Chemical mapping of a 177-nucleotide RNA with DMS and 2A3. It was measured as part of the RMDB library OK2TST. 2A3 adducts were read by reverse transcription with SuperScript II with manganese. For 2A3, 513 sequencing reads were counted. The DMS profile rests on 911 reads. DMS adducts were read by reverse transcription with MarathonRT.

RNA sequence: GGGAACGACUCGAGUAGAGUCGAAAAUGCACCAUAUAAAUGUGUCUGUGGAUGAAGUCAAAGGUUUGUUAGGUGUGGAUUACGAGAUGACAACAAAGAUAUUAUUUCAGAUAGCAAUAUUGAAAGGUGUAGGAUGAACGUUCGCGUUCAUCCUACAAAAAGAAACAACAACAACAAC
Reactivity to DMS in 0.01 (KOAc 150mM, MgCl2 10mM, bicine 150mM(pH8.5), 24C), signal-to-noise 1, nucleotides 027 to 126: u010g000c050a190c030c050a050u020a100u010a080a080a070u000g020u000g020u000c040u020g010u000g000g010a080u000g000a100a240g000u000c040a030a080a120g010g000u000u000u000g010u000u000a060g000g020u000g020u000g030g000a050u020u000a030c040g000a090g000a080u000g000a050c020a030a060c050a070a050a220g010a100u000a090u000u000a180u000u000u000c000a040g020a060u000a030g050c130a030a100u010a040u010u000g010a040a090a030g000g010
Reactivity to 2A3 in 0.01 (KOAc 150mM, MgCl2 10mM, bicine 150mM(pH8.5), 24C), signal-to-noise 1, nucleotides 027 to 126: u050g040c040a030c060c020a030u040a040u060a250a160a100u090g050u000g000u020c000u000g040u060g050g000a000u030g050a070a040g020u040c050a080a010a000g000g050u100u140u120g090u050u050a020g110g030u050g000u050g110g150a170u100u140a030c060g000a030g010a160u170g000a030c030a060a000c000a000a300a000g000a000u200a070u140u090a060u000u070u000c060a070g010a060u060a030g060c000a000a090u040a090u230u110g050a120a070a000g070g020